Chemical mapping of a 207-nucleotide RNA with 2A3. Source: RMDB library OK3TST, as collected in RNAgym. Conditions: 150 mM KOAc, 10 mM MgCl2 and 150 mM bicine (pH 8.5), 24 C.
RNA sequence: GGGAACGACUCGAGUAGAGUCGAAAAGUUCGUCGGAUUCUCUCUAUCAAGAGAUGGGGAAAUGAAAGCACAAAGAGGGGAUAUGCUUGCCCAUGGUUACACAGUUCUGGAAUCUGAACCUGGUCCAGUAGUGAUCUCAUCCACUAUGGCUCAUGGCCGCGUACCACUAGUUCGCUAGUGGUACGCGAAAAGAAACAACAACAACAAC
Reactivity to 2A3 in 0.01 (KOAc 150mM, MgCl2 10mM, bicine 150mM(pH8.5), 24C), signal-to-noise 1, nucleotides 027 to 156: g060u040u090c060g010u060c050g100g040a130u130u000c020u000c000u000c030u040a050u110c060a300a000g020a080g000a110u050g000g000g000g000a060a090a000u180g030a080a070a100g010c050a040c030a060a110a000g030a020g030g000g000g010a000u040a010u130g050c060u060u010g030c000c000c020a010u030g010g000u020u150a090c120a000c030a080g040u040u110c020u030g020g090a090a100u030c030u070g010a030a030c000c000u000g030g020u030c010c000a010g060u000a000g020u140g080a080u050c040u000c070a110u050c000c000a080c010u050a030u030g030g060c010u030c000a040u080g040g000c040